[RMDB]
RNA sequence: GGGAACGACUCGAGUAGAGUCGAAAACGGGGGCCUCGGGAAGAGUUAUCUUUUCUGCUUAACGGCCUGCCAACCCUGGAAUCGGUUCAGCCGGAGGUAGGGUCCAGCGGUCGGAAGAGCACCGCACCCCAGAUGAUUCCUUCGGGAAUCAUCUGGGAAAAGAAACAACAACAACAAC
Reactivity to DMS in 0.01 (KOAc 150mM, MgCl2 10mM, bicine 150mM(pH8.5), 24C), signal-to-noise 1, nucleotides 027 to 126: c140g000g000g000g020g000c150c060u010c160g000g010g000a040a020g020a030g000u000u080a000u030c000u000u030u000u000c020u000g050c100u120u040a030a280c050g020g000c030c030u020g000c070c200a120a110c000c000c000u000g010g000a170a130u000c000g010g000u000u050c240a160g010c060c100g000g010a010g010g030u010a070g010g040g000u030c160c100a160g020c120g030g000u010c000g000g000a070a120g010a000g000c110a080c010c000g000c110a300c150
Reactivity to 2A3 in 0.01 (KOAc 150mM, MgCl2 10mM, bicine 150mM(pH8.5), 24C), signal-to-noise 2, nucleotides 027 to 126: c030g000g000g000g010g060c000c000u030c080g030g030g020a010a010g070a030g040u180u160a180u090c000u030u010u020u000c070u090g120c020u060u000a090a020c020g010g000c020c000u040g000c000c010a030a070c000c000c000u030g050g080a040a090u090c040g090g000u120u180c080a070g050c020c000g030g000a020g040g100u070a000g020g010g000u000c060c000a020g000c010g010g000u020c030g000g030a130a070g020a170g050c010a010c000c000g020c020a020c000

Chemical mapping of a 177-nucleotide RNA with DMS and 2A3. Source: RMDB library RFM100, as collected in RNAgym. The 2A3 profile rests on 896 reads. 2A3 adducts were read by reverse transcription with SuperScript II with manganese. Conditions: 150 mM KOAc, 10 mM MgCl2 and 150 mM bicine (pH 8.5), 24 C. DMS adducts were read by reverse transcription with MarathonRT.